[RMDB]
RNA sequence: GGGAACGACUCGAGUAGAGUCGAAAAGAUAUGGAGUGAAUAGGCGCUGAUGACCUCGGAAACGAGCAAGGCGCUAUACCACUCCUAAGUCAAAACAUACUGUGAAAGUUCGCUUUCACAGUAUGAACCAAGGAUAUAUGUUCGCAUAUAUCCUUGGAAAAGAAACAACAACAACAAC
Reactivity to 2A3 in 0.01 (KOAc 150mM, MgCl2 10mM, bicine 150mM(pH8.5), 24C), signal-to-noise 8, nucleotides 027 to 126: g030a010u070a040u150g010g000a010g010u010g020a050a040u100a200g150g040c000g000c020u030g020a300u190g040a140c010c010u000c010g010g030a080a080a040c010g000a000g010c020a040a100g000g010c000g000c010u000a000u010a000c010c000a000c010u000c000c000u010a090a020g020u010c030a010a020a030a100c000a000u000a000c000u000g000u000g020a010a010a010g020u080u170c280g040c180u010u000u000c000a010c000a000g000u000a000u000g000a000a010
Reactivity to DMS in 0.01 (KOAc 150mM, MgCl2 10mM, bicine 150mM(pH8.5), 24C), signal-to-noise 9, nucleotides 027 to 126: g010a020u000a300u000g000g010a020g010u000g010a090a120u000a130g010g010c000g030c000u000g010a100u020g000a090c300c000u000c010g000g000a100a120a160c010g000a010g000c030a060a130g000g010c000g010c000u000a020u000a060c160c000a020c000u000c000c000u000a020a070g010u000c030a070a060a090a180c000a010u000a010c000u000g010u000g000a010a010a000g010u000u010c260g010c000u000u000u000c000a000c000a010g000u000a000u000g000a060a170